[RMDB]
RNA sequence: GGGAACGACUCGAGUAGAGUCGAAAAAGAAGAGGAGACAGCUUGCCGCUCGCCCCCAGACCCGAGAUGAGCCUCGUGCCGAGGAGAGGCCGGAGACGGAGAGGCAGGAGGUCCCGAGGAGUAUCCAGAGACUUAAUUACUUCGGUAAUUAAGUCUCAAAAGAAACAACAACAACAAC
Reactivity to DMS in 0.01 (KOAc 150mM, MgCl2 10mM, bicine 150mM(pH8.5), 24C), signal-to-noise 1, nucleotides 027 to 126: a110g030a120a090g000a170g000g000a080g000a040c040a030g030c020u000u000g020c010c010g010c010u000c030g000c010c010c020c000c020a170g000a130c070c010c020g010a080g020a230u010g010a150g030c010c000u010c010g030u010g030c130c030g000a050g010g020a140g010a040g000g010c000c030g010g010a030g010a080c110g010g040a040g010a060g030g010c020a020g000g000a040g010g030u010c010c000c000g000a060g020g020a090g010u000a040u010c000c080a190

Chemical mapping of a 177-nucleotide RNA with DMS.
For DMS the reverse transcriptase was MarathonRT.
Reactivities are given for positions 27 through 126.
The DMS profile rests on 843 reads.
The data come from the RNA Mapping Database (RMDB), library 15KREP.
Values are in units of 0.01, from 0 to 300, in steps of 10.